[RMDB]
RNA sequence: GGGAACGACUCGAGUAGAGUCGAAAAUGCGGGGAAGGAUGAGAAGCUUCGACCAAGGUUCGACUCGAGCGCCAGCGAGAGAGCGUUGCCGCAGGCAACGACCCGAAGGGCGAAGCGCGCAGCGCUGUUGAAAACAAUAGUUCGCUAUUGUUUUCAAAAAAGAAACAACAACAACAAC
Reactivity to 2A3 in 0.01 (KOAc 150mM, MgCl2 10mM, bicine 150mM(pH8.5), 24C), signal-to-noise 5, nucleotides 027 to 126: u150g010c050g010g010g020g020a060a040g030g040a080u110g040a060g050a140a020g030c010u020u020c020g130a160c010c020a050a040g080g000u030u060c040g040a060c030u010c020g010a010g020c020g010c010c010a030g030c030g010a040g000a010g020a010g050c000g010u000u010g010c000c020g110c080a050g060g000c020a030a030c050g090a130c000c010c010g080a080a090g020g010g000c000g000a010a000g000c010g000c020g000c000a020g000c020g000c020u030g040
Reactivity to DMS in 0.01 (KOAc 150mM, MgCl2 10mM, bicine 150mM(pH8.5), 24C), signal-to-noise 9, nucleotides 027 to 126: u020g010c080g000g000g010g000a080a050g010g010a080u010g010a130g010a130a150g000c040u000u000c020g010a080c030c020a120a230g000g010u010u000c070g010a130c020u000c020g000a170g010c020g010c070c090a110g000c040g000a140g010a140g010a090g010c020g010u000u000g010c010c010g020c190a090g010g010c030a030a040c010g000a140c040c020c030g010a100a120g010g010g000c030g010a050a050g010c010g010c080g020c060a070g010c040g010c040u000g010

Notes:
An RNA of 177 nucleotides, treated with 2A3 and DMS and read out base by base. 2A3 adducts were read by reverse transcription with SuperScript II with manganese.